[RMDB]
Description:
The record gives the reactivity of an RNA of 207 nucleotides to DMS and 2A3. DMS (dimethyl sulfate) methylates the pairing face of unpaired adenines and cytosines. The reactions ran in a buffer of 150 mM KOAc, 10 mM MgCl2 and 150 mM bicine (pH 8.5), at 24 C. Reactivities are given for positions 27 through 156.

RNA sequence: GGGAACGACUCGAGUAGAGUCGAAAAACGAGUGAGUUACGACUCACUCGACUUUUAAUACUACCCAAAGGUCGUGACAAGUCGAUAAAACGCAGAGUCAAAAAGUCCGACGUUACGACGUCGGACAACGAGCGAGUUCUGUUCGCAGAACUCGCAAGAUCUUUAGCUUGUUCGCAAGCUAAAGAUCAAAAGAAACAACAACAACAAC
Reactivity to DMS in 0.01 (KOAc 150mM, MgCl2 10mM, bicine 150mM(pH8.5), 24C), signal-to-noise 1, nucleotides 027 to 156: a120c020g000a030g040u000g000a020g020u000u000a090c230g070a180c000u010c000a010c010u010c000g010a010c030u010u000u000u000a080a090u000a170c050u020a090c000c010c000a070a100a070g040g000u020c000g000u000g040a300c020a060a200g030u000c010g020a130u010a040a100a120a120c090g000c040a120g010a200g010u010c000a000a060a120a050a080g000u000c010c000g040a000c000g040u000u010a080c210g030a140c000g000u000c010g010g010a010c000a010a000c090g010a090g000c000g040a020g000u000u000c000u000g000u010u000c300g040c000a010g010a010a000c010u020c010g000c000a000a000
Reactivity to 2A3 in 0.01 (KOAc 150mM, MgCl2 10mM, bicine 150mM(pH8.5), 24C), signal-to-noise 4, nucleotides 027 to 156: a010c000g000a000g000u000g010a000g000u020u070a100c210g050a020c050u000c000a000c000u000c000g000a010c000u000u010u020u050a120a060u100a090c020u050a050c020c000c000a030a080a020g080g000u030c020g030u030g030a050c040a130a030g050u080c010g040a060u060a150a160a020a000c080g020c100a020g010a030g130u100c050a070a030a000a050a040g000u000c000c010g000a000c010g000u010u050a060c210g020a000c000g030u000c000g000g000a000c000a000a000c010g040a000g000c000g000a000g000u000u010c000u000g070u080u070c160g000c070a000g000a010a000c020u010c000g000c000a000a000